RNA sequence: GGGAACGACUCGAGUAGAGUCGAAAAACAUCUGCACCGGUUUCCAAGGCUUCUCCCUCACUAAUUGCUCUGAUUAUUGUGUGAAGUGAAGCACUGGCACGUUUCCGCGAUGUUGUGAUGAAGGUGAGAUUGCUGUAGGAUUCGUCCUACAGCAAUCAAAAGAAACAACAACAACAAC
Reactivity to DMS in 0.01 (KOAc 150mM, MgCl2 10mM, bicine 150mM(pH8.5), 24C), signal-to-noise 3, nucleotides 027 to 126: a070c070a020u000c010u030g000c010a080c060c030g020g000u000u010u020c020c020a070a130g010g000c010u000u010c030u000c090c030c010u000c020a030c030u000a000a030u020u000g000c100u040c110u030g010a120u020u010a030u000u000g020u010g020u030g030a100a110g030u000g010a050a040g020c000a060c040u000g000g000c270a160c020g000u000u000u000c020c030g000c130g000a040u000g000u000u000g020u000g020a100u030g000a080a100g000g030u000g010a200
Reactivity to 2A3 in 0.01 (KOAc 150mM, MgCl2 10mM, bicine 150mM(pH8.5), 24C), signal-to-noise 3, nucleotides 027 to 126: a000c000a010u020c020u040g010c000a040c000c020g020g000u010u090u050c020c010a020a050g020g000c000u060u020c020u040c000c010c000u050c010a000c020u030a030a030u070u100g050c060u050c080u140g070a100u060u160a070u160u120g020u030g030u030g070a100a030g040u020g070a020a010g000c010a020c020u000g000g000c020a010c070g030u030u080u020c040c020g040c050g020a100u050g010u090u020g050u010g030a110u050g080a080a050g090g000u080g020a050

The record gives the reactivity of an RNA of 177 nucleotides to DMS and 2A3. Values cover nucleotides 27 to 126. 2A3 adducts were read by reverse transcription with SuperScript II with manganese. For 2A3, 2,039 sequencing reads were counted.